An RNA of 207 nucleotides, treated with 2A3 and read out base by base.
[RMDB]
RNA sequence: GGGAACGACUCGAGUAGAGUCGAAAAUGGCGCGGUUGAAGUUCGGGGGACGGCUGAUUGACUGUCCAUCGGCCCUGAUGGUCGGUGUCGAAGCCUCGUCCCGCAGGAUCAGUGGUGAUGGGGCCCUGACUGGAGGGUCAGGGUAAACCAUCUUAGUCAAAUCUAGUGACUUCGGUCACUAGAUUUGAAAAGAAACAACAACAACAAC
Reactivity to 2A3 in 0.01 (KOAc 150mM, MgCl2 10mM, bicine 150mM(pH8.5), 24C), signal-to-noise 1, nucleotides 027 to 156: u060g060g000c020g000c020g030g040u060u130g060a110a030g040u110u100c040g080g000g000g010g050a000c030g030g000c000u030g030a150u090u150g060a050c010u040g020u050c010c000a010u010c000g140g040c120c020c070u090g040a060u090g020g020u000c020g040g010u100g040u080c110g010a070a020g030c030c060u060c080g000u000c000c010c000g000c010a020g000g050a040u060c040a020g030u050g030g120u090g020a000u010g000g010g010g020c010c000c000u000g010a010c030u050g080g090a120g060g030g030u010c000a000g000g000g000u040a040a000a010c010c000a000u000c030u010u090a050g010u000

Source: RMDB library ARCHII, as collected in RNAgym.